Source information: The record gives the reactivity of an RNA of 207 nucleotides to 2A3 and DMS. Values cover nucleotides 27 to 156. 2A3 adducts were read by reverse transcription with SuperScript II with manganese.

[RMDB]
RNA sequence: GGGAACGACUCGAGUAGAGUCGAAAAUCACUUUGGGACGCUUAGAAUUUGAGCGGCUAAAUUUUGAGGUUUGGAAUUACCUGACGAACUGGUCGUGGCUCAAUUCAAUAUCCUUGAUGUCGUUUUUAAGAGUGAGUUCGAAUGAGAGUGGUCCUGGCUAGAUUGAGUUGUUCGCGACUUAGUCUAGAAAAGAAACAACAACAACAAC
Reactivity to 2A3 in 0.01 (KOAc 150mM, MgCl2 10mM, bicine 150mM(pH8.5), 24C), signal-to-noise 7, nucleotides 027 to 156: u040c000a020c020u040u030u050g060g000g020a020c010g020c030u040u090a040g050a150a110u140u080u150g010a010g000c000g010g010c010u060a090a080a170u140u160u080u190g040a020g010g020u030u020u040g060g050a050a030u060u010a060c000c000u010g030a060c030g020a110a110c070u120g050g020u030c040g090u080g080g000c030u030c090a000a020u040u000c000a010a050u050a040u120c010c020u020u040g020a040u050g040u080c020g010u020u040u030u040u130a060a020g020a020g030u050g030a040g030u040u040c030g030a050a030u100g020a040g000a000g050u040g010g010u010c000c000u010g020g020
Reactivity to DMS in 0.01 (KOAc 150mM, MgCl2 10mM, bicine 150mM(pH8.5), 24C), signal-to-noise 5, nucleotides 027 to 156: u010c010a030c050u000u000u000g020g020g020a030c010g020c050u000u000a090g010a200a120u000u010u000g010a050g020c010g020g000c020u000a040a050a110u000u000u000u010g010a150g010g010u000u000u010g020g000a130a090u000u000a050c010c020u010g010a110c070g000a090a110c120u000g020g020u010c020g020u000g030g030c040u010c060a030a080u000u010c030a050a110u000a070u010c030c010u000u000g000a090u000g020u010c030g020u000u010u000u000u000a070a150g010a100g010u000g000a070g000u000u000c040g010a080a080u000g010a250g010a100g010u000g010g010u000c010c020u000g020g010